[RMDB]
RNA sequence: GGGAACGACUCGAGUAGAGUCGAAAAGAUAUGGAUAUAAUACGUCGAUAAGAGCAGUGUCGGAAACGACACGCUCUUUUGACGACGUUAUAUCCUAAGUCAAACCCAUCCGCUUCGGCGGAUGGGACUAGUGAACCUAGUUCGCUAGGUUCACUAGAAAAGAAACAACAACAACAAC
Reactivity to DMS in 0.01 (KOAc 150mM, MgCl2 10mM, bicine 150mM(pH8.5), 24C), signal-to-noise 5, nucleotides 027 to 126: g010a040u000a300u000g000g020a010u000a000u000a000a030u000a090c030g020u000c000g010a060u010a010a010g000a010g010c000a120g070u000g020u000c000g010g010a090a060a180c000g010a000c000a000c000g000c010u000c000u000u000u000u000g000a090c040g000a060c090g000u000u000a000u000a010u000c000c000u010a040a140g010u000c020a120a130a220c000c000c000a010u000c000c000g000c000u000u010c230g050g030c000g000g000a000u000g010g000g010a010
Reactivity to 2A3 in 0.01 (KOAc 150mM, MgCl2 10mM, bicine 150mM(pH8.5), 24C), signal-to-noise 5, nucleotides 027 to 126: g030a000u050a010u120g000g010a010u000a000u010a050a110u150a120c020g000u000c030g080a150u090a300a010g010a000g020c300a150g030u000g000u010c000g020g010a050a040a040c000g000a000c010a010c000g000c010u010c020u020u000u010u040g120a040c020g020a030c030g000u010u000a000u000a000u010c000c000u020a080a010g030u030c040a050a020a300c000c000c000a000u000c000c010g030c030u100u130c300g200g000c020g000g000a000u000g000g000g000a050